RNA sequence: GGGAACGACUCGAGUAGAGUCGAAAAACUCGUGAAUAAAGAAGAAGCUAUGCACAUGAUUCACGAGGAACGUUUGGAGUGCAUAGCUACAUCCAGCAUUGGAUGUUAUAUUAGAGUCCAGACGGAAGAUAGUAAGGAGAUUCGUCUCUUUACUAUCAAAAGAAACAACAACAACAAC
Reactivity to 2A3 in 0.01 (KOAc 150mM, MgCl2 10mM, bicine 150mM(pH8.5), 24C), signal-to-noise 9, nucleotides 027 to 126: a000c000u000c000g000u010g020a020a020u130a150a170a100g190a110a020g040a030a000g010c000u000a000u000g040c000a020c020a080u180g020a040u110u010c000a000c000g000a000g010g040a130a050c020g000u000u010u010g010g010a010g000u010g010c000a000u000a000g000c000u000a000c000a000u000c000c000a020g130c160a300u130u160g010g000a000u000g000u020u010a040u000a000u010u150a040g050a010g060u000c000c000a000g000a000c000g010g020a040a030
Reactivity to DMS in 0.01 (KOAc 150mM, MgCl2 10mM, bicine 150mM(pH8.5), 24C), signal-to-noise 9, nucleotides 027 to 126: a080c010u000c000g000u010g010a010a010u010a070a090a130g010a160a120g010a130a030g010c000u000a000u000g000c000a010c010a150u020g000a070u000u000c000a010c000g000a010g010g010a060a050c010g020u000u000u000g010g000a070g010u000g000c000a000u000a000g000c010u010a010c000a000u000c000c000a020g020c300a110u050u000g000g010a000u000g000u000u020a050u040a110u020u020a080g010a140g010u000c000c000a000g000a000c000g000g010a130a110